[RMDB]
RNA sequence: GGGAACGACUCGAGUAGAGUCGAAAAGAGAACCUUCUUGAGCGUUGGCAGAGCUGAUCGGAUUCGGUAGUCGUUGGUGAUCUUACCGUUUUUCACGGGAACAUUAAAGUCAACACGGAUAAGAACCGUCUAGACUGCGUUUCGACGCAGUCUAGACAAAAGAAACAACAACAACAAC
Reactivity to DMS in 0.01 (KOAc 150mM, MgCl2 10mM, bicine 150mM(pH8.5), 24C), signal-to-noise 1, nucleotides 027 to 126: g010a030g000a100a080c050c050u020u000c020u000u010g000a140g000c090g000u010u000g000g010c090a070g000a180g070c070u000g000a040u070c020g020g000a090u000u000c000g010g020u030a070g010u000c020g030u070u000g030g090u000g000a000u010c090u070u000a180c010c000g000u000u000u000u010u010c140a080c000g050g000g000a060a120c140a070u000u000a000a080a220g020u010c020a000a020c080a000c010g010g000a110u000a010a140g030a110a040c230c010
Reactivity to 2A3 in 0.01 (KOAc 150mM, MgCl2 10mM, bicine 150mM(pH8.5), 24C), signal-to-noise 2, nucleotides 027 to 126: g140a000g020a000a050c000c030u000u000c010u050u120g070a100g030c060g000u000u140g030g050c020a020g000a030g040c070u050g050a100u090c070g010g000a010u020u030c010g060g010u100a020g050u060c040g080u010u160g020g120u230g020a040u000c020u000u110a030c010c010g040u000u000u000u080u150c120a130c080g030g000g090a090a000c000a030u160u200a190a070a000g010u010c000a030a040c040a000c090g090g010a020u030a120a070g030a080a060c030c030

Record summary:
Source: RMDB library OK1LIB, as collected in RNAgym. This 177-nucleotide RNA was probed chemically with DMS and 2A3. The 2A3 profile rests on 1,117 reads. For 2A3 the reverse transcriptase was SuperScript II with manganese. For DMS the reverse transcriptase was MarathonRT.